[RMDB]
RNA sequence: GGGAACGACUCGAGUAGAGUCGAAAAUGUCCGACGUGGAGGAACGUCCUUGUAGGUCACUUCAACAUCUGGAUGGCCUCACGGGACCGUCUGGACGAUUGUCUGGAAGCCCCAAGGGAGGGUGUGAUAAGGGCAUGGAUUUCGAUCCAUGCCCUUAAAAAGAAACAACAACAACAAC
Reactivity to DMS in 0.01 (KOAc 150mM, MgCl2 10mM, bicine 150mM(pH8.5), 24C), signal-to-noise 1, nucleotides 027 to 126: u020g010u000c000c000g010a120c070g080u000g010g020a140g010g000a120a110c100g010u000c000c000u000u010g030u000a010g000g030u000c010a030c190u000u000c000a040a150c290a100u000c120u030g020g020a020u000g000g000c010c010u000c130a060c140g000g000g000a030c030c060g030u000c000u000g050g000a020c000g020a100u020u010g000u000c040u000g020g000a100a190g000c020c020c020c030a080a140g010g000g040a150g010g010g010u000g000u000g020a150